[RMDB]
RNA sequence: GGGAACGACUCGAGUAGAGUCGAAAAGAUAUGGAUCACGAUGAAACAUGCACCGACGAAGUCGGAAACGACAGAGGUGUAUGUGGAGUGAUCCUAAGUCAAACGCACACUGUUCGCAGUGUGCGAACCUUCUUCCGUGGUUCGCCACGGAAGAAGGAAAAGAAACAACAACAACAAC
Reactivity to DMS in 0.01 (KOAc 150mM, MgCl2 10mM, bicine 150mM(pH8.5), 24C), signal-to-noise 1, nucleotides 027 to 126: g000a000u000a300u000g000g010a000u000c020a010c000g030a100u060g100a020a130a010c000a000u010g010c010a010c010c010g000a300c170g020a020a170g020u000c000g020g000a050a060a080c050g010a000c000a080g000a160g000g010u010g020u010a020u010g000u000g000g000a050g000u000g020a000u000c000c020u050a030a030g000u000c000a120a100a130c040g000c010a020c000a010c010u000g030u000u000c250g000c020a020g000u000g010u000g000c000g000a050a050
Reactivity to 2A3 in 0.01 (KOAc 150mM, MgCl2 10mM, bicine 150mM(pH8.5), 24C), signal-to-noise 2, nucleotides 027 to 126: g000a020u120a000u220g020g000a010u000c000a000c000g300a300u060g060a040a030a000c000a000u010g020c000a000c000c040g300a300c100g100a190a010g010u010c010g060g080a140a050a050c010g010a000c000a010g070a030g000g030u010g020u000a000u000g000u000g020g000a030g010u020g000a010u000c000c010u010a050a000g030u040c030a050a000a030c000g000c000a010c000a000c020u010g100u110u140c300g030c070a020g000u040g010u000g000c000g000a010a000